[RMDB]
RNA sequence: GGGAACGACUCGAGUAGAGUCGAAAACAACAGUCCGACGAUGUUUCCCAGCCAGGGGUUUUCAUCCUCAAGUUUCUUGAUCUUCUUGUUGGAUCGCCGGAGAUCCUUCUCGAGCAGUCGCCUUUUCAGCUACUAGAUAGUUCGCUAUCUAGUAGCUAAAAGAAACAACAACAACAAC
Reactivity to 2A3 in 0.01 (KOAc 150mM, MgCl2 10mM, bicine 150mM(pH8.5), 24C), signal-to-noise 1, nucleotides 027 to 126: c020a030a010c020a020g080u060c020c020g030a020c010g040a030u050g010u060u100u030c010c000c000a000g000c030c020a050g050g050g020g000u120u150u180u120c030a030u070c000c000u060c030a000a020g040u160u140u020c010u100u150g020a100u040c020u060u000c020u050u150g020u030u070g050g020a050u060c010g010c050c040g100g020a040g010a040u030c000c000u070u040c040u030c020g030a050g000c050a050g090u030c000g100c000c060u000u120u030u150c100
Reactivity to DMS in 0.01 (KOAc 150mM, MgCl2 10mM, bicine 150mM(pH8.5), 24C), signal-to-noise 2, nucleotides 027 to 126: c100a070a090c100a100g000u000c040c030g010a080c070g020a100u010g010u000u010u010c070c010c000a180g000c070c090a060g000g010g010g010u010u000u020u010c070a040u000c020c040u000c050a060a110g010u000u000u020c050u000u010g000a070u000c030u000u000c020u000u000g000u000u010g020g010a020u000c050g030c080c040g030g000a140g000a030u000c000c010u000u000c020u000c020g000a060g000c130a080g000u000c070g000c080c020u010u000u010u010c130

Record summary
Source: RMDB library 15KREP, as collected in RNAgym. This 177-nucleotide RNA was probed chemically with 2A3 and DMS. Reactivities are given for positions 27 through 126. DMS adducts were read by reverse transcription with MarathonRT. 2A3 adducts were read by reverse transcription with SuperScript II with manganese.